This 177-nucleotide RNA was probed chemically with 2A3 and DMS. The reactions ran in a buffer of 150 mM KOAc, 10 mM MgCl2 and 150 mM bicine (pH 8.5), at 24 C.
RNA sequence: GGGAACGACUCGAGUAGAGUCGAAAAGUAUUACUGACCUCGUUCUGCACAUAGGCUUACGAGCUGUCCGUCCUGACUGGCACCCAAGUCCUCCUCCUCGUUGUAUCCGAAACUGGUCUAGUAUACAGAUGUCCUCAACAUUCGUGUUGAGGACAUCAAAAGAAACAACAACAACAAC
Reactivity to 2A3 in 0.01 (KOAc 150mM, MgCl2 10mM, bicine 150mM(pH8.5), 24C), signal-to-noise 1, nucleotides 027 to 126: g030u030a040u140u150a080c040u030g060a020c000c000u020c050g050u070u020c010u120g080c040a090c060a190u150a060g080g040c010u010u040a060c060g040a020g020c040u020g040u040c030c000g020u000c000c000u040g070a120c030u010g030g010c000a000c000c030c010a030a000g030u020c000c000u010c010c000u030c010c010u010c030g060u000u080g070u050a070u060c030c000g040a050a050a020c060u040g010g010u000c000u050a020g050u040a000u010a030c000a010
Reactivity to DMS in 0.01 (KOAc 150mM, MgCl2 10mM, bicine 150mM(pH8.5), 24C), signal-to-noise 2, nucleotides 027 to 126: g000u000a070u010u010a060c040u000g010a050c030c020u000c070g030u000u000c050u000g030c070a140c150a110u000a120g000g000c040u020u000a080c130g000a080g000c060u000g010u000c060c060g020u000c050c030u010g010a080c080u010g000g030c040a070c020c020c020a060a090g000u010c070c020u000c010c010u000c010c000u000c080g010u000u000g010u000a050u010c020c030g010a080a050a090c100u020g020g000u000c010u010a070g020u000a060u000a050c080a150
It was measured as part of the RMDB library OK2TST.
For 2A3 the reverse transcriptase was SuperScript II with manganese.
The DMS profile rests on 2,267 reads.